[RMDB]
RNA sequence: GGGAACGACUCGAGUAGAGUCGAAAAGUCAGAUUCGUCUGACCUCGAACCUUUGUGCGUGUGAGUAGCAUAUUGUCAGUCGUGUCCCAUUGGGAAGGAACGACUUGGAUUUAUAUGCGAAAGCACGCACUCUGGUAAUAUUUCCGUUCGCGGAAAAUCCCCGUGCAUGGUUCGCCAUGCACGGGGAAAAAGAAACAACAACAACAAC
Reactivity to 2A3 in 0.01 (KOAc 150mM, MgCl2 10mM, bicine 150mM(pH8.5), 24C), signal-to-noise 1, nucleotides 027 to 156: g070u030c010a010g010a010u070u280c240g120u020c080u040g000a050c030c030u090c110g130a040a010c000c000u010u010u030g000u030g030c050g010u010g000u010g010a010g000u000a000g000c000a010u000a000u000u000g010u000c010a030g000u000c020g020u080g300u130c090c010c010a100u200u280g160g020g040a190a120g010g000a060a000c000g000a020c000u000u150g100g000a010u080u300u000a030u030a000u010g000c000g010a000a010a000g000c000a000c000g000c000a000c000u000c000u000g000g050u000a010a300u120a090u100u010u000c000c020g030u010u110c200g000c160g040g040a000a000a300a030